Background
Chemical mapping of a 207-nucleotide RNA with 2A3.
RNA sequence: GGGAACGACUCGAGUAGAGUCGAAAAACGCAUCAUACGUGAUGCGAGAACUACAGUUCCGCUCCUCCAGCACACAGAGGUCAAUUGGGUGCGACCCCCCCCUCUCCCGUGGGUCAACGGGAACCAAAAAAGACCCUUUAGUUCGCUAAAGGGUCAACCUAGCUCAUGUCUUCGGACAUGAGCUAGGAAAAGAAACAACAACAACAAC
Reactivity to 2A3 in 0.01 (KOAc 150mM, MgCl2 10mM, bicine 150mM(pH8.5), 24C), signal-to-noise 1, nucleotides 027 to 156: a000c000g000c000a000u000c000a020u040a110c220g080u030g000a010u010g020c020g010a040g050a050a020c090u200a070c120a080g000u030u010c020c030g040c140u050c000c000u000c000c000a030g010c000a000c000a040c000a010g010a020g000g020u060c010a060a040u120u120g000g000g000u020g010c000g100a140c000c000c010c010c000c000c030c000u020c000u010c000c000c000g000u000g000g000g050u110c010a000a000c000g010g000g000a000a000c010c020a000a000a070a070a000a000g010a000c000c000c020u000u000u000a000g030u060u080c190g000c140u000a000a000a010g000g000g000u000c000a000a000